[RMDB]
An RNA of 177 nucleotides, treated with DMS and 2A3 and read out base by base. The data come from the RNA Mapping Database (RMDB), library OK1LIB.
RNA sequence: GGGAACGACUCGAGUAGAGUCGAAAAUUCAUCUGUAGUUGUAUUCCCAAUAUUACCUUCCCAAACUACAUUUUUUAGAGCUGUUUGGCUUUCUGUUGGAGUAUAUUCACUACCUCCACCAUCACCACAUCCGGCUAAUAUUCGUAUUAGCCGGAUGAAAAGAAACAACAACAACAAC
Reactivity to DMS in 0.01 (KOAc 150mM, MgCl2 10mM, bicine 150mM(pH8.5), 24C), signal-to-noise 2, nucleotides 027 to 126: u090u030c160a010u010c080u000g000u000a010g000u000u000g010u040a110u000u000c050c030c010a180a170u080a000u020u020a110c100c050u000u000c000c020c000a140a080a000c010u020a030c000a020u000u000u000u060u020u030a140g020a030g000c000u000g000u000u040u020g000g000c040u000u000u030c130u000g000u000u000g010g010a040g010u020a090u000a120u010u000c120a110c080u010a100c190c030u000c000c030a030c090c040a040u040c050a120c060c140a160
Reactivity to 2A3 in 0.01 (KOAc 150mM, MgCl2 10mM, bicine 150mM(pH8.5), 24C), signal-to-noise 3, nucleotides 027 to 126: u090u070c010a110u050c050u110g040u020a030g000u030u030g040u080a070u040u030c020c000c000a000a060u270a110u140u110a040c020c040u000u090c010c010c000a030a060a000c010u050a020c030a080u090u030u050u020u070u210a120g030a020g030c040u050g170u240u100u170g090g000c030u060u130u040c040u110g080u070u020g000g030a060g070u040a050u000a060u190u130c070a030c110u050a090c020c020u030c010c000a010c000c000a050u070c050a030c050c000a030
The reactions ran in a buffer of 150 mM KOAc, 10 mM MgCl2 and 150 mM bicine (pH 8.5), at 24 C.